[RMDB]
RNA sequence: GGGAACGACUCGAGUAGAGUCGAAAACCUGGAGAGGUCUUCUGCCCUAGCCCGGUCUUCGAAGCUUCCUUUGGCUACUACCCGGUGGAAACAACUGAAGCUUCAACGCCUUUUUUUCCAAUCUUCUUUAGCACCGGGCCAGGGAGUAAGCCCGUGGCCUUCCCAUAUUGUUCGCAAUAUGGGAAGGAAAAGAAACAACAACAACAAC
Reactivity to 2A3 in 0.01 (KOAc 150mM, MgCl2 10mM, bicine 150mM(pH8.5), 24C), signal-to-noise 3, nucleotides 027 to 156: c010c010u040g030g110a150g020a080g030g040u020c020u050u050c040u100g300c020c000c000u000a000g000c000c000c030g050g010u060c100u240u120c270g000a000a000g000c000u010u010c000c010u010u000u030g020g000c010u010a020c000u070a110c000c030c010g020g020u030g000g060a180a290a070c020a000a020c010u020g000a010a000g010c000u000u020c040a020a000c030g100c000c040u080u060u020u070u060u190u150c090c050a160a200u130c090u220u040c010u090u300u240a060g000c060a010c020c010g000g030g030c010c000a000g010g000g000a000g000u040a000a000g000c000c000c000g020u070g090g040
An RNA of 207 nucleotides, treated with 2A3 and read out base by base. Reactivities are rounded to 0.1 and cut off at 0 and 3. The reactions ran in a buffer of 150 mM KOAc, 10 mM MgCl2 and 150 mM bicine (pH 8.5), at 24 C.